An RNA of 207 nucleotides, treated with DMS and 2A3 and read out base by base. The DMS profile rests on 4,600 reads. The RNA was probed in 150 mM KOAc, 10 mM MgCl2 and 150 mM bicine (pH 8.5) at 24 C. For 2A3 the reverse transcriptase was SuperScript II with manganese.
RNA sequence: GGGAACGACUCGAGUAGAGUCGAAAAAUAUCGUGGGGUAAAGUGAAAAUCUACUACCGAUGAUGUAAGUCUUACAAUGUUCGAACCAGUACCAGAUCUUAAUUUGGAGGCCUCCGUAGAACUAGGGGAGGUAAAUAUAGAUCAAACAACACCUAUGAAUCAGGUGUAAGUUCGCUUACACCUGAUUAAAAGAAACAACAACAACAAC
Reactivity to DMS in 0.01 (KOAc 150mM, MgCl2 10mM, bicine 150mM(pH8.5), 24C), signal-to-noise 3, nucleotides 027 to 156: a080u000a050u000c030g050u000g030g020g020g020u000a060a200a080g000u000g010a060a090a130a110u000c040u010a060c020u000a120c030c030g000a080u000g010a160u000g010u000a020a100g010u010c070u010u000a070c090a080a120u000g000u010u000c040g020a120a130c020c040a080g010u000a110c040c010a110g000a060u010c080u010u010a070a110u010u000u010g050g020a160g000g010c020c000u000c000c000g030u010a130g010a070a070c090u000a110g030g010g020g010a060g000g000u000a000a010a070u000a130u000a060g010a050u000c020a030a060a110c040a050a060c050a050c020c020u000a090u010g030
Reactivity to 2A3 in 0.01 (KOAc 150mM, MgCl2 10mM, bicine 150mM(pH8.5), 24C), signal-to-noise 3, nucleotides 027 to 156: a000u080a020u080c020g000u060g030g020g010g030u080a060a030a030g030u050g120a070a070a030a060u070c040u040a080c000u020a080c060c020g010a010u040g010a020u020g000u070a060a080g040u030c030u060u090a070c050a050a120u110g020u040u120c030g020a020a010c020c010a020g030u030a060c040c000a050g000a020u000c000u050u090a120a100u160u080u120g040g030a060g100g000c000c010u010c000c000g120u100a050g040a270a090c070u040a070g030g020g010g020a010g000g000u000a010a030a000u070a000u020a000g050a040u070c040a090a020a070c050a020a010c030a040c060c030u080a090u130g090